[RMDB]
Source information: Structure probing data (DMS and 2A3) for a 207-nucleotide construct. The RNA was probed in 150 mM KOAc, 10 mM MgCl2 and 150 mM bicine (pH 8.5) at 24 C. For DMS the reverse transcriptase was MarathonRT. The 2A3 profile rests on 1,002 reads. For 2A3 the reverse transcriptase was SuperScript II with manganese.
RNA sequence: GGGAACGACUCGAGUAGAGUCGAAAAACCUUAUUUUGAGAAGCUGAGGGAUUUGGCCCAUAGUAGCUUCAGCAACCGACUUUAAAUAGCACGGUGCUAAUACCAACGAGCAACUCGAAUGAUAAGUAAAACGUUGACAAGUUCGCUUGUCAACGAACAAUGACGAUUCGUUCGCGAAUCGUCAUUGAAAAGAAACAACAACAACAAC
Reactivity to DMS in 0.01 (KOAc 150mM, MgCl2 10mM, bicine 150mM(pH8.5), 24C), signal-to-noise 1, nucleotides 027 to 156: a150c000c000u010u000a030u000u010u000u000g000a160g070a190a300g090c110u000g030a060g020g000g000a140u010u000u020g010g000c000c030c040a180u020a140g070u050a080g000c010u000u020c010a030g010c020a080a030c000c010g000a170c000u000u010u010a080a150a140u000a010g130c000a030c020g000g010u000g000c010u020a030a010u000a020c000c030a240a090c040g060a170g070c010a040a180c020u010c000g010a050a050u000g010a180u030a110a120g010u010a080a030a090a150c000g010u000u000g030a020c000a000a020g040u000u000c300g020c000u000u030g030u000c050a000a000c010g100a020a030
Reactivity to 2A3 in 0.01 (KOAc 150mM, MgCl2 10mM, bicine 150mM(pH8.5), 24C), signal-to-noise 2, nucleotides 027 to 156: a010c000c000u040u120a120u030u130u090u100g080a080g000a010a000g000c000u030g020a030g010g030g050a110u080u060u200g090g000c020c020c000a040u080a070g090u070a030g010c000u090u050c030a010g000c000a020a020c000c020g040a000c000u100u120u210a160a170a240u120a110g000c000a010c000g000g000u000g000c000u010a020a000u030a070c010c010a050a030c090g050a020g050c050a000a060c010u020c020g020a040a030u110g100a040u040a110a000g040u060a010a020a060a060c000g010u000u030g000a010c020a000a010g010u000u020c060g070c240u010u000g020u000c000a000a000c000g000a000a000